[RMDB]
RNA sequence: GGGAACGACUCGAGUAGAGUCGAAAAACUGAUACCUUACAAGGUAUCAGAAUGACUUCGUGGUAGAGCGCCACGAACGGAAAAUAAAGAAAGCUCGAUUGAAACGCACCGUGUACGCACGGUGCGAAAAAGUCGAUCCAGUUCGCUGGAUCGACAACUUUGAUACUCUCUUCGGAGAGUAUCAAAGAAAAGAAACAACAACAACAAC
Reactivity to 2A3 in 0.01 (KOAc 150mM, MgCl2 10mM, bicine 150mM(pH8.5), 24C), signal-to-noise 1, nucleotides 027 to 156: a000c000u000g000a000u000a000c010c010u180u300a080c120a180a070g000g000u000a000u000c000a000g010a020a030u060g040a040c010u010u000c000g000u000g030g020u030a120g010a010g010c010g020c000c000a000c000g000a010a000c010g020g000a080a030a020a000u040a000a030a050g110a080a050a000g000c020u010c010g170a170u070u180g070a110a060a000c020g010c000a000c000c010g000u010g010u050a050c180g000c060a010c000g090g000u010g000c000g000a000a000a000a000a000g070u000c000g000a000u020c040c000a010g020u050u060c070g060c080u000g050g000a020u000c000g000a000c000a010a010